Chemical mapping of a 207-nucleotide RNA with DMS and 2A3. For DMS the reverse transcriptase was MarathonRT. The reactions ran in a buffer of 150 mM KOAc, 10 mM MgCl2 and 150 mM bicine (pH 8.5), at 24 C.
RNA sequence: GGGAACGACUCGAGUAGAGUCGAAAAGUAUAGAAGCAUGAGACCGCAUGCGUUAUACGAUGAAUCUCGGUCGAAUCCGUUGUGCGAAAGCACUUCGGUAAUGCAUAUCGGUAGACAGAUCCGCCCGGAUCAGCUACCGUAAUUAGUACGGGCAAGAAAUUAAUACCUCCUUCGGGAGGUAUUAAUUAAAAGAAACAACAACAACAAC
Reactivity to DMS in 0.01 (KOAc 150mM, MgCl2 10mM, bicine 150mM(pH8.5), 24C), signal-to-noise 2, nucleotides 027 to 156: g010u000a080u000a020g040a140a080g020c010a000u000g000a180g000a130c020c080g000c080a030u010g010c010g000u000u000a060u000a040c020g020a130u000g000a180a120u000c040u000c010g020g050u000c060g000a120a160u000c020c010g050u000u000g020u010g000c000g000a190a160a200g000c000a030c000u030u000c010g030g000u000a050a070u000g040c080a160u010a170u000c000g060g020u000a050g000a070c050a180g000a050u000c010c050g010c150c130c130g040g000a050u000c010a100g010c000u010a020c000c000g000u000a000a010u000u000a110g000u010a080c020g020g000g000c080a150a150g000a150
Reactivity to 2A3 in 0.01 (KOAc 150mM, MgCl2 10mM, bicine 150mM(pH8.5), 24C), signal-to-noise 1, nucleotides 027 to 156: g000u000a060u050a220g120a240a000g020c000a000u000g020a030g030a060c020c000g020c020a020u050g000c020g020u070u040a060u020a060c070g040a020u140g060a110a170u060c030u020c040g050g060u000c000g020a020a060u020c010c010g000u000u000g000u020g040c020g030a100a000a000g010c000a000c010u000u000c000g000g000u080a090a000u130g100c090a020u030a080u260c020g000g000u020a040g030a110c070a060g000a040u000c000c020g010c050c010c030g000g020a000u010c030a000g000c000u000a000c000c000g020u010a000a000u150u100a030g040u020a020c020g000g000g000c060a040a000g060a040
For 2A3 the reverse transcriptase was SuperScript II with manganese.